[RMDB]
RNA sequence: GGGAACGACUCGAGUAGAGUCGAAAAAGACAUCAAUCAGAUGUUGUGAGAACUGAUUUCUGCAUCAGAAUAUCUCCUUGACUUUACAGCUAUCCUUUAAUCCUGGCUCAAAGUUCCAGAAGAAAGAUGAUCCAAUAUAAUACUCCUAUUUGGACUACACGAUUAUAAUCUUCGGAUUAUAAUCGUGAAAAGAAACAACAACAACAAC
Reactivity to 2A3 in 0.01 (KOAc 150mM, MgCl2 10mM, bicine 150mM(pH8.5), 24C), signal-to-noise 8, nucleotides 027 to 156: a000g050a010c020a020u030c030a040a230u170c070a090g020a050u030g020u060u030g040u100g020a070g020a100a050c010u010g010a020u030u130u150c110u210g040c060a020u010c010a020g100a170a080u060a060u090c050u030c020c000u020u040g020a030c010u040u050u160a140c020a000g000c010u030a030u080c010c000u050u060u090a080a050u080c010c020u010g020g000c000u010c060a110a080a040g020u090u000c010c010a020g020a040a000g040a020a080a020g040a020u090g010a020u020c030c000a040a000u080a010u020a100a060u050a050c020u030c010c000u050a070u080u060u090g040g010a030c010u120a020
Reactivity to DMS in 0.01 (KOAc 150mM, MgCl2 10mM, bicine 150mM(pH8.5), 24C), signal-to-noise 4, nucleotides 027 to 156: a140g020a080c040a040u010c010a120a150u010c170a160g010a050u010g020u000u010g020u010g000a140g010a110a300c020u000g000a070u000u000u010c130u010g030c110a110u000c020a070g000a240a110u000a070u000c010u010c020c010u010u000g010a050c020u000u010u000a090c010a050g000c010u000a060u000c030c020u010u010u000a050a180u000c010c000u010g010g010c020u000c030a080a060a100g020u000u000c020c020a080g010a070a060g010a060a060a070g010a120u000g020a060u010c040c040a040a060u000a060u000a040a060u000a020c020u000c010c030u000a080u010u000u010g020g010a110c030u000a230
This 207-nucleotide RNA was probed chemically with 2A3 and DMS. The RNA was probed in 150 mM KOAc, 10 mM MgCl2 and 150 mM bicine (pH 8.5) at 24 C. For 2A3 the reverse transcriptase was SuperScript II with manganese.